[RMDB]
RNA sequence: GGGAACGACUCGAGUAGAGUCGAAAAGAUAUGGAUCCCUGACUGCAACAGCCCAGGUGGUCGGAAACGACCACUGGGACAUGCAGAUGGGAUCCUAAGUCAAAACCGGAAUGUUCGCAUUCCGGAAGUACAUUAGUUGCUUCGGCAACUAAUGUACAAAAGAAACAACAACAACAAC
Reactivity to 2A3 in 0.01 (KOAc 150mM, MgCl2 10mM, bicine 150mM(pH8.5), 24C), signal-to-noise 3, nucleotides 027 to 126: g020a010u020a010u060g000g010a010u020c000c030c000u050g300a300c030u010g030c070a300a060c050a300g040c030c000c000a110g040g300u050g010g010u000c000g020g010a030a030a010c010g000a010c000c000a000c010u000g010g000g000a010c010a100u100g000c010a010g000a050u030g000g020g000a000u000c000c000u010a030a000g000u010c030a000a010a090a170c000c000g000g020a010a010u040g030u060u170c300g020c250a020u000u020c000c000g000g000a010a020
Reactivity to DMS in 0.01 (KOAc 150mM, MgCl2 10mM, bicine 150mM(pH8.5), 24C), signal-to-noise 3, nucleotides 027 to 126: g020a030u000a160u000g000g010a000u000c000c000c000u000g010a270c260u010g020c000a090a100c270a150g010c000c000c000a040g010g000u000g010g010u000c000g030g000a030a040a060c000g010a000c000c000a000c000u000g000g000g000a000c100a040u030g020c010a010g010a300u000g000g000g020a000u000c000c000u010a000a090g000u010c000a160a050a120a180c010c000g000g000a020a000u000g010u010u030c240g000c010a000u000u000c000c000g000g010a000a030